[RMDB]
RNA sequence: GGGAACGACUCGAGUAGAGUCGAAAACCGUAGGGAUAGAACUACAGCCACUCUGGUACUUGGACCUUCGAAAGAGGCUAGUACCUGCGCAGCUUAGGUGGCUGCUAUCCCUAAACGGAAACCUUUUCCUAAUGACUUCGGUCAUUAGGAAAAGGAAGGCAUAUUUGAUCUUCGGAUCAAAUAUGCCAAAAGAAACAACAACAACAAC
Reactivity to 2A3 in 0.01 (KOAc 150mM, MgCl2 10mM, bicine 150mM(pH8.5), 24C), signal-to-noise 2, nucleotides 027 to 156: c000c000g000u030a040g000g010g000a010u010a000g030a070a140c080u150a080c290a040g010c000c000a040c020u170c060u080g000g020u020a030c040u080u130g190g130a300c030c030u130u090c120g150a090a080a060g010a000g000g010c000u000a000g000u010a000c020c000u030g060c160g030c060a270g000c070u120u230a080g070g010u000g020g000c000u000g000c000u000a000u000c000c000c000u000a030a000a000c010g030g060a060a010a080c000c000u000u000u000u000c000c020u010a000a000u000g010a000c020u050u070c300g120g000u000c010a010u000u000a000g010g000a000a000a010a000g020g000a000a010